[RMDB]
RNA sequence: GGGAACGACUCGAGUAGAGUCGAAAACGCCAGUGGCAGGUGAUCGGUACGUUAUGUGCUGAGUCGCAUCCUAUAAGCGUACAUGCGAUGCGCGUCGUUGCGCAAAUCAGAAUCCCUGAACCUAGCAUCUAGGCUACGGCUUCGGUCGUAGUCUAGAAAAAGAAACAACAACAACAAC
Reactivity to DMS in 0.01 (KOAc 150mM, MgCl2 10mM, bicine 150mM(pH8.5), 24C), signal-to-noise 9, nucleotides 027 to 126: c070g010c010c060a090g020u010g010g010c120a050g000g020u020g010a060u000c010g010g010u000a010c020g020u030u040a060u040g020u010g010c040u020g010a060g010u010c020g000c030a060u010c230c040u000a080u020a090a100g010c020g020u010a050c090a110u010g010c060g000a150u000g010c020g010c010g000u020c290g010u030u050g010c000g000c020a020a050a140u010c040a050g000a130a090u010c010c010c000u000g000a080a100c070c040u010a080g010c150a160
Reactivity to 2A3 in 0.01 (KOAc 150mM, MgCl2 10mM, bicine 150mM(pH8.5), 24C), signal-to-noise 9, nucleotides 027 to 126: c060g030c020c010a060g050u090g060g000c050a040g000g060u070g050a040u040c020g020g010u030a020c020g060u150u200a110u300g030u020g000c020u070g050a040g060u080c010g000c020a050u060c010c020u150a110u040a240a030g020c020g020u020a020c020a060u070g030c050g070a050u040g010c010g000c010g050u130c070g090u140u180g000c010g000c000a020a050a030u070c020a010g060a090a050u020c010c000c000u010g030a040a040c010c010u010a020g030c020a050